[RMDB]
RNA sequence: GGGAACGACUCGAGUAGAGUCGAAAAUGAUGACCGACUAAACCACCCUCUGCUUCAUAUGCAGCUGGAGCCAUGAGUCCCACCAUGUGUUUUCUUGGUUGGUGGUUUAGUCCCUGGGAGCUCUGGGGCAUAGCAUCUAUUUCGAUAGAUGCUAUGCAAAAGAAACAACAACAACAAC
Reactivity to DMS in 0.01 (KOAc 150mM, MgCl2 10mM, bicine 150mM(pH8.5), 24C), signal-to-noise 6, nucleotides 027 to 126: u000g010a140u010g010a190c150c090g010a030c010u000a010a010a010c000c010a020c010c000c180u010c010u000g010c010u000u010c300a120u010a070u010g020c030a020g010c110u010g010g000a030g010c010c050a010u010g000a210g010u000c000c010c010a170c260c010a010u000g000u010g010u000u000u010u000c020u000u000g020g010u010u000g010g030u000g010g000u000u000u000a010g000u000c000c050c050u000g010g000g010a120g010c130u010c020u000g000g000g010
Reactivity to 2A3 in 0.01 (KOAc 150mM, MgCl2 10mM, bicine 150mM(pH8.5), 24C), signal-to-noise 4, nucleotides 027 to 126: u140g070a050u130g080a030c050c110g020a010c010u000a000a000a010c010c000a010c010c010c010u070c010u010g000c010u080u110c090a080u120a060u300g030c000a010g000c010u020g000g010a000g000c000c010a020u020g010a010g090u030c010c000c000a010c010c000a010u040g180u000g070u080u110u190u090c020u030u050g090g030u100u100g010g000u020g000g000u000u000u000a000g000u010c000c000c000u040g010g020g020a060g020c040u020c030u110g020g000g060